[RMDB]
RNA sequence: GGGAACGACUCGAGUAGAGUCGAAAACACUGUGUAUAUUUCGCUUCUUGCACCCGCCGCCUGGCCAAGGUGCCUGAUGUUCACAUAGCAAUUUCUGCGUAUCGGCGGACGGUUUCGGCAGAGCCGAGACCCAGCCUCCAUUCGUGGAGGCUGGGUCAAAAGAAACAACAACAACAAC
Reactivity to 2A3 in 0.01 (KOAc 150mM, MgCl2 10mM, bicine 150mM(pH8.5), 24C), signal-to-noise 1, nucleotides 027 to 126: c040a000c020u070g010u000g030u030a010u050a050u300u150u110c040g020c020u040u050c010u000u090g020c000a000c000c000c030g000c000c010g090c050c100u170g060g000c040c040a140a060g000g050u080g040c000c010u070g000a030u040g030u070u080c030a000c030a120u110a020g000c050a050a090u080u030u090c050u090g030c030g050u080a040u150c010g010g040c000g040g070a020c020g040g000u000u000u060c030g060g000c010a040g040a060g180c040c000g020a020
Reactivity to DMS in 0.01 (KOAc 150mM, MgCl2 10mM, bicine 150mM(pH8.5), 24C), signal-to-noise 1, nucleotides 027 to 126: c080a090c090u030g000u000g020u000a090u000a060u000u020u000c160g010c000u010u000c040u000u000g010c040a050c030c010c030g000c030c020g020c110c120u000g030g010c110c040a100a150g000g020u000g000c010c030u000g020a030u000g000u000u000c100a110c080a040u010a090g000c130a090a060u010u000u000c030u010g010c090g020u000a100u010c040g000g000c020g000g020a060c100g000g000u000u000u000c000g010g010c030a120g010a130g050c020c020g000a100